Structure probing data (2A3) for a 207-nucleotide construct. Reactivities are given for positions 27 through 156. High 2A3 reactivity points to a flexible backbone, as in loops and unpaired stretches. For 2A3, 757 sequencing reads were counted. The RNA was probed in 150 mM KOAc, 10 mM MgCl2 and 150 mM bicine (pH 8.5) at 24 C. Source: RMDB library OK3TST, as collected in RNAgym. For 2A3 the reverse transcriptase was SuperScript II with manganese.
RNA sequence: GGGAACGACUCGAGUAGAGUCGAAAACAACUUAAACCAUGUCGGCAGAAGAACGCACAGCAACGCUUUGUAAAAAGCAUUCUUUCUAUUAUAGAAUCCAUAACCACGCUGGUUAGCCACUGACAGCGGCGGUUAGCCACCGCACCUCCUCUCACCCAUCACAGAACGUUUUCGAACGUUCUGUGAUAAAAGAAACAACAACAACAAC
Reactivity to 2A3 in 0.01 (KOAc 150mM, MgCl2 10mM, bicine 150mM(pH8.5), 24C), signal-to-noise 2, nucleotides 027 to 156: c040a010a090c020u140u220a060a010a090c030c010a090u060g010u040c080g020g000c090a000g010a080a000g060a170a030c010g000c020a100c020a100g040c060a070a080c080g010c060u090u100u080g130u130a070a160a030a000a000g010c020a010u000u020c020u010u070u020c040u070a190u180u150a120u150a140g120a120a020u030c050c010a020u080a070a130c020c020a060c080g000c010u030g010g040u040u030a010g010c010c020a010c050u050g070a060c020a010g060c090g070g000c020g020g040u020u030a010g020c020c000a020c020c020g000c000a030c010c020u010c040c000u000c000u000c000a060c040c030c000